Structure probing data (2A3 and DMS) for a 207-nucleotide construct. Values cover nucleotides 27 to 156. 2A3 adducts were read by reverse transcription with SuperScript II with manganese. The DMS profile rests on 16,005 reads. In probing experiments dimethyl sulfate is read out at A N1 and C N3, which are open when not base-paired. High 2A3 reactivity points to a flexible backbone, as in loops and unpaired stretches. For 2A3, 16,699 sequencing reads were counted. It was measured as part of the RMDB library OK3TST.
[RMDB]
RNA sequence: GGGAACGACUCGAGUAGAGUCGAAAACAAUUUCUCCGCUGCGGCACGAGUGAAGGUACGCGGCCAGACACAAACUUGGAACAGCAUCCGUAUGGCUUCCGUUUAGGACGUCUACGCUGACCACGCCGUCGUUGUCCGCGAUGAUCAAAUGCCCCUGCAUACGAAAAGGAUUCGUCCUUUUCGUAUGAAAAGAAACAACAACAACAAC
Reactivity to 2A3 in 0.01 (KOAc 150mM, MgCl2 10mM, bicine 150mM(pH8.5), 24C), signal-to-noise 9, nucleotides 027 to 156: c040a050a110u030u070u040c060u020c020c030g010c060u080g000c050g030g000c020a010c050g060a080g050u090g070a140a040g070g020u080a050c020g000c000g020g000c020c010a030g030a020c010a000c020a110a130a020c040u070u100g030g040a230a140c020a050g020c010a060u130c130c090g080u110a090u280g020g010c010u010u000c010c010g070u160u210u280a060g010g010a020c020g000u000c010u020a010c030g000c020u020g010a040c000c000a030c040g010c040c030g060u060c020g090u100u100g060u060c010c010g000c030g040a070u100g020a030u060c040a040a070a030u060g030c010c000c000c010u040g030
Reactivity to DMS in 0.01 (KOAc 150mM, MgCl2 10mM, bicine 150mM(pH8.5), 24C), signal-to-noise 6, nucleotides 027 to 156: c060a100a160u010u010u000c010u000c010c090g010c060u020g000c060g020g040c060a070c040g020a160g040u000g010a100a130g010g010u010a040c040g050c010g030g010c010c040a090g010a100c050a110c080a090a060a090c070u000u000g030g010a080a140c050a130g020c070a300u010c080c050g020u000a050u010g020g010c010u000u010c020c010g020u010u000u010a140g010g020a020c030g000u000c010u000a020c020g010c020u000g000a190c010c010a030c040g040c030c030g000u000c010g010u000u000g010u010c020c040g020c040g000a090u010g010a150u010c060a040a060a100u000g010c010c000c010c030u000g020
The RNA was probed in 150 mM KOAc, 10 mM MgCl2 and 150 mM bicine (pH 8.5) at 24 C.